[RMDB]
Notes:
An RNA of 177 nucleotides, treated with DMS and read out base by base. The RNA was probed in 150 mM KOAc, 10 mM MgCl2 and 150 mM bicine (pH 8.5) at 24 C. For DMS, 790 sequencing reads were counted.
RNA sequence: GGGAACGACUCGAGUAGAGUCGAAAACUAUUUAUCGGCACUGAAAGGCCGUGAUGGGCUUUCUUCCCCUUCGGUACUGGCGUUAACUGCCCAUAUCGCCGCCUAUCAGCAAGGCGCGCCGUGGCUACUGGCCACGGUCAUUCGUGACCGUGGCCAGAAAAGAAACAACAACAACAAC
Reactivity to DMS in 0.01 (KOAc 150mM, MgCl2 10mM, bicine 150mM(pH8.5), 24C), signal-to-noise 1, nucleotides 027 to 126: c060u010a080u020u020u020a140u000c010g030g030c000a090c080u010g030a130a160a160g000g020c020c030g010u000g040a070u000g000g020g000c110u000u000u010c210u010u000c000c000c000c100u000u000c030g000g000u000a070c090u000g000g040c030g000u000u000a040a140c140u010g030c010c010c010a070u020a070u010c070g030c050c050g000c010c030u000a100u000c170a100g060c170a100a040g010g020c020g010c100g000c050c200g040u000g000g000c040u000a130
For DMS the reverse transcriptase was MarathonRT.